Structure probing data (DMS) for a 177-nucleotide construct. Conditions: 150 mM KOAc, 10 mM MgCl2 and 150 mM bicine (pH 8.5), 24 C.
RNA sequence: GGGAACGACUCGAGUAGAGUCGAAAAGCCCCUGUGGGCAUUUGAGUUUGCGACCCCUGUGUUAAACCAAUAAACAUGCAAAUAAAUGUACAGUGACACCUGGUGAUAAGUACUGUGAGGGCCAAGGCAGCACAUCGAUAUUCGUAUCGAUGUGCUGAAAAGAAACAACAACAACAAC
Reactivity to DMS in 0.01 (KOAc 150mM, MgCl2 10mM, bicine 150mM(pH8.5), 24C), signal-to-noise 1, nucleotides 027 to 126: g000c040c000c020c130u020g040u010g000g000g020c010a020u010u000u000g010a060g020u010u000u010g040c030g000a230c030c000c050c000u000g020u000g000u000u000a120a090a060c110c150a020a110u030a010a040a070c050a050u000g010c030a000a030a000u000a010a030a030u010g010u000a070c050a050g020u000g020a050c030a040c150c030u010g020g010u020g000a100u000a070a100g010u010a050c080u000g010u010g000a070g000g020g000c060c040a030a070g000g040